[RMDB]
RNA sequence: GGGAACGACUCGAGUAGAGUCGAAAAAGCGCUAGAGAUGUACACGGGUUUUCCCCCUUAUCUGUGUACUAUCUCUGUUCAUACCUUAGGGAUAGGUUGAGUGGGGGAGGUCUGGAAGGGGCGCGAAGUGUAUUUAAUUUUUCGAAAUUAAAUACACAAAAGAAACAACAACAACAAC
Reactivity to DMS in 0.01 (KOAc 150mM, MgCl2 10mM, bicine 150mM(pH8.5), 24C), signal-to-noise 6, nucleotides 027 to 126: a140g010c070g000c040u020a030g010a040g010a040u000g010u010a020c020a040c010g000g010g010u000u010u040u000c010c000c000c010c030u020u020a030u000c010u000g010u010g010u010a030c000u040a000u000c000u000c000u010g000u010u020c080a100u030a080c100c070u010u020a120g020g000g010a140u020a050g000g000u010u000g010a110g010u010g010g000g000g000g000a060g000g010u020c110u010g010g000a120a090g000g000g000g000c080g000c080g000a040a080
Reactivity to 2A3 in 0.01 (KOAc 150mM, MgCl2 10mM, bicine 150mM(pH8.5), 24C), signal-to-noise 7, nucleotides 027 to 126: a000g040c030g020c030u060a010g000a010g000a080u020g020u030a010c010a000c010g010g000g000u010u020u040u050c000c000c000c000c000u030u050a040u040c010u020g050u010g010u030a010c010u030a030u000c000u000c000u000g030u050u030c040a050u070a170c020c000u070u100a050g000g010g040a040u030a050g040g020u050u070g030a050g030u070g010g000g010g010g000a010g010g030u040c040u040g010g030a070a030g010g000g000g000c040g000c020g040a100a020